[RMDB]
RNA sequence: GGGAACGACUCGAGUAGAGUCGAAAAGGAUUGACGAUGCCACAAGUAUUUGCUCCUGAUGGAAGUCAUAUUGGUGGAUUUGACCAAUUGCGGGAAUACUUUAAAUGAUAGAAUUAAAUGAACAGACUAUUUUUCUAGGCGAUGGCACAGAAGACGACAUUCUGAGCUUCUUCGGAAGCUCAGAAUGAAAAGAAACAACAACAACAAC
Reactivity to 2A3 in 0.01 (KOAc 150mM, MgCl2 10mM, bicine 150mM(pH8.5), 24C), signal-to-noise 1, nucleotides 027 to 156: g000g010a110u060u040g010a020c030g030a000u080g030c020c000a070c030a030a010g010u090a070u100u110u190g080c040u030c000c000u060g000a100u170g080g060a060a000g030u020c020a010u020a010u150u030g010g030u000g090g000a180u090u050u130g020a000c030c000a090a020u090u120g050c050g000g000g000a020a020u020a090c000u190u230u220a090a080a170u080g030a040u030a040g020a030a110u080u120a070a070a110u060g020a030a010c020a020g050a050c020u020a060u030u100u000u000u010c000u000a050g000g000c020g090a060u070g050g000c020a000c010a010g070a030a040g020a010c050g000a010

The record gives the reactivity of an RNA of 207 nucleotides to 2A3. As a SHAPE reagent, 2A3 marks flexible, mostly unpaired nucleotides at the ribose 2'-OH. For 2A3 the reverse transcriptase was SuperScript II with manganese.